Structure probing data (DMS) for a 177-nucleotide construct.
RNA sequence: GGGAACGACUCGAGUAGAGUCGAAAAGAUAUGGACUUACAUCUAACUGUCCACUGCAAGGCCAAACGGUCGGAAACGACCGCUAGGCUGAUGACCAGUGGAGCAGUUAGAUGUAAGUCCUAAGUCAGCUGAUAACAGAGUUCGCUCUGUUAUCAGCAAAAGAAACAACAACAACAAC
Reactivity to DMS in 0.01 (KOAc 150mM, MgCl2 10mM, bicine 150mM(pH8.5), 24C), signal-to-noise 2, nucleotides 027 to 126: g000a030u030a300u010g000g000a030c000u000u030a000c000a000u000c000u020a010a000c000u000g010u000c000c010a040c000u000g000c030a100a150g020g040c000c010a040a230a240c010g050g010u000c010g020g020a060a090a250c000g000a050c000c000g010c010u000a300g000g020c000u010g000a000u030g000a080c300c000a010g010u010g010g000a150g000c010a010g000u010u010a010g010a000u000g010u000a000a000g000u000c000c000u010a020a050g000u000c030a180
Values cover nucleotides 27 to 126. The data come from the RNA Mapping Database (RMDB), library TTRINS.